An RNA of 177 nucleotides, treated with DMS and 2A3 and read out base by base.
For DMS, 4,886 sequencing reads were counted.
Values cover nucleotides 27 to 126.
For DMS the reverse transcriptase was MarathonRT.
For 2A3 the reverse transcriptase was SuperScript II with manganese.

RNA sequence: GGGAACGACUCGAGUAGAGUCGAAAAGGGCAAUGGCUGUGGCUUGUUUGGAAAAGGAGGAGUUGUGACAUGUGCGAAGUUUUCAUGUUCGGGGAAGAUAACAGGCAAUUUGGUCCAAAUUGAGAACCACAUUAGAUUGCUUCGGCAAUCUAAUGUGAAAAGAAACAACAACAACAAC
Reactivity to DMS in 0.01 (KOAc 150mM, MgCl2 10mM, bicine 150mM(pH8.5), 24C), signal-to-noise 4, nucleotides 027 to 126: g020g000g020c050a080a120u000g010g020c040u010g010u010g010g030c030u000u010g000u000u010u010g000g000a080a070a090a100g000g010a110g010g010a100g030u000u000g020u010g020a050c050a040u010g000u010g010c090g010a100a100g010u000u000u000u010c030a050u010g000u000u010c080g030g000g000g010a070a090g000a080u000a060a050c070a040g000g010c030a060a080u000u000u000g010g000u000c060c020a050a070a080u010u000g010a110g000a090a110c140
Reactivity to 2A3 in 0.01 (KOAc 150mM, MgCl2 10mM, bicine 150mM(pH8.5), 24C), signal-to-noise 1, nucleotides 027 to 126: g040g000g000c070a040a070u060g080g000c030u050g040u050g070g010c000u120u120g050u060u090u160g090g040a080a110a030a050g050g020a030g050g000a060g020u150u090g050u160g060a030c010a060u060g010u010g040c060g070a090a030g010u070u100u100u130c050a030u050g060u080u090c020g010g000g000g000a010a020g000a050u070a040a070c040a000g000g000c000a000a060u120u010u040g080g000u010c030c000a050a050a050u060u050g050a080g000a000a000c040